[RMDB]
Source information
Chemical mapping of a 170-nucleotide RNA with 2A3 and DMS. Reactivities are rounded to 0.1 and cut off at 0 and 3. For 2A3, 9,131 sequencing reads were counted. The DMS profile rests on 19,276 reads.
RNA sequence: GGGAACGACUCGAGUAGAGUCGAAAAAUGGAACUUGCUAAUGGUACACAUACCGGUUCAGCAUUUGAUGGUACUAUGUAUGGUGCCUUUAUGGAUAAACAAGUGCACCAAGUUCAGUUAACAGACACGCCCAUUGCCUUCGGGCAAUGGAAAAGAAACAACAACAACAAC
Reactivity to 2A3 in 0.01 (KOAc 150mM, MgCl2 10mM, bicine 150mM(pH8.5), 24C), signal-to-noise 5, nucleotides 027 to 129: a020u110g000g000a010a000c000u000u010g020c040u070a050a050u070g020g020u000a000c240a020c010a070u040a030c000c020g050g000u050u080c050a010g040c050a120u050u070u190g100a070u060g020g030u030a000c000u070a040u160g060u010a070u040g010g000u000g000c000c000u000u020u020a090u040g030g030a050u150a070a030a000c030a060a000g050u050g160c030a030c040c000a010a030g010u000u010c010a000g000u020u090a070a050c040a020g110a030c050a020c120g020c000
Reactivity to DMS in 0.01 (KOAc 150mM, MgCl2 10mM, bicine 150mM(pH8.5), 24C), signal-to-noise 4, nucleotides 027 to 129: a080u010g000g000a000a000c010u030u040g000c000u030a060a100u040g020g040u010a040c080a130c050a000u020a020c000c030g040g020u010u040c100a030g030c050a150u030u020u040g000a030u000g010g000u000a000c020u070a020u070g000u020a060u030g000g020u000g020c020c040u000u010u000a070u020g040g000a130u000a060a060a090c070a040a070g010u000g000c130a100c100c030a000a000g000u020u030c010a060g000u030u060a090a060c120a090g050a090c000a090c200g090c090